Chemical mapping of a 177-nucleotide RNA with 2A3 and DMS. The reactions ran in a buffer of 150 mM KOAc, 10 mM MgCl2 and 150 mM bicine (pH 8.5), at 24 C. Source: RMDB libraries RFM100 and RFMREP, as collected in RNAgym. For DMS the reverse transcriptase was MarathonRT.
[RMDB]
RNA sequence: GGGAACGACUCGAGUAGAGUCGAAAAAGUGGACCUUACGAGGUCCACAGUAGGCCUUUAGAUCAUCUAAAGAGUAUUCAACAUUAGAUGAGCUAAAGGCCUAUACAGAGCUGGUACGCCAGCUCAACUUUUGGGUUUAAUUCGUUAAACCCAAAAGAAAAGAAACAACAACAACAAC
Reactivity to 2A3 in 0.01 (KOAc 150mM, MgCl2 10mM, bicine 150mM(pH8.5), 24C), signal-to-noise 7, nucleotides 027 to 126: a000g000u000g000g000a000c000c000u050u020a070c270g090a020g010g000u000c000c000a000c000a000g000u010a000g000g010c000c000u000u010u000a010g000a010u010c000a010u000c010u010a010a060a000g240a060g060u100a190u100u260c080a080a070c000a040u020u010a000g000a000u000g000a000g000c000u000a000a000a000g000g000c000c000u000a000u000a000c000a010g000a000g000c000u000g000g000u030a010c240g040c020c000a000g000c000u000c000a000a000
Reactivity to DMS in 0.01 (KOAc 150mM, MgCl2 10mM, bicine 150mM(pH8.5), 24C), signal-to-noise 6, nucleotides 027 to 126: a080g030u000g000g010a010c010c000u010u020a110c190g020a040g000g000u000c000c000a010c010a030g010u000a000g010g000c000c000u000u010u000a000g000a020u000c010a000u000c000u010a000a020a070g000a190g020u020a120u040u030c200a120a110c070a130u000u000a010g000a020u000g000a010g010c000u010a000a010a010g000g000c000c000u000a000u000a030c210a090g010a020g010c000u000g000g010u020a110c290g020c000c000a000g010c000u000c010a010a050